[RMDB]
RNA sequence: GGGAACGACUCGAGUAGAGUCGAAAAAAAAGAAGUGCCAACACAAAUUUAGCAUUAGCUGCUUAAUUUAGCAGCUACGCUCUUCUAACCCGGGCUGGCAGGGUUAGAAGGGUGUCAUAAUGAGCCAGCUGCCCCUUCCGACUCCCCUAAGGAAGGGCCUAUAGUCGUACUUCGGUACGACUAUAGGAAAAGAAACAACAACAACAAC
Reactivity to 2A3 in 0.01 (KOAc 150mM, MgCl2 10mM, bicine 150mM(pH8.5), 24C), signal-to-noise 2, nucleotides 027 to 156: a040a000a000a000g070a100a000g020u010g040c020c030a080a000c010a040c050a130a270a040u160u230u110a060g020c050a020u020u000a000g000c010u000g010c000u110u080a180a150u300u150u240a030g000c000a000g000c000u000a000c000g000c000u000c000u000u010c000u000a000a000c010c000c000g000g080g000c000u000g000g000c010a020g000g000g000u000u000a000g000a000a000g000g000g000u000g030u030c020a000u090a240a120u130g020a000g000c000c000a000g000c000u000g000c030c000c000c000u000u020c000c000g000a000c050u050c000c000c010c020u000a010a010g000g000a010a000g000g000g000
Description: This 207-nucleotide RNA was probed chemically with 2A3. It was measured as part of the RMDB library RSTRND. The reactions ran in a buffer of 150 mM KOAc, 10 mM MgCl2 and 150 mM bicine (pH 8.5), at 24 C. 2A3 adducts were read by reverse transcription with SuperScript II with manganese.